Chemical mapping of a 177-nucleotide RNA with DMS. Reactivities are rounded to 0.1 and cut off at 0 and 3.
[RMDB]
RNA sequence: GGGAACGACUCGAGUAGAGUCGAAAAUCAAAUAAUUCCACCGACUGCCCAUUGUGGGUUACCAGUUGCUCUGAUGAUGGCCCAAGUGGGAGUAAAGAGAAGAAGCCAGAUAGGAUCUACAAAAAAAGAAUGGGAAAGGAUUCGUCCUUUCCCAUUCAAAAGAAACAACAACAACAAC
Reactivity to DMS in 0.01 (KOAc 150mM, MgCl2 10mM, bicine 150mM(pH8.5), 24C), signal-to-noise 1, nucleotides 027 to 126: u030c120a070a050a110u000a170a140u030u000c020c030a090c070c010g000a080c060u010g000c000c000c010a060u010u010g020u000g000g000g010u000u000a030c040c030a010g020u030u000g010c150u040c010u020g010a070u010g010a150u020g000g000c000c000c010a070a030g020u000g000g000g000a120g000u000a010a050a120g000a170g030a070a030g000a050a100g020c020c040a060g000a050u010a050g000g010a200u000c010u010a070c110a020a000a030a070a120a050a160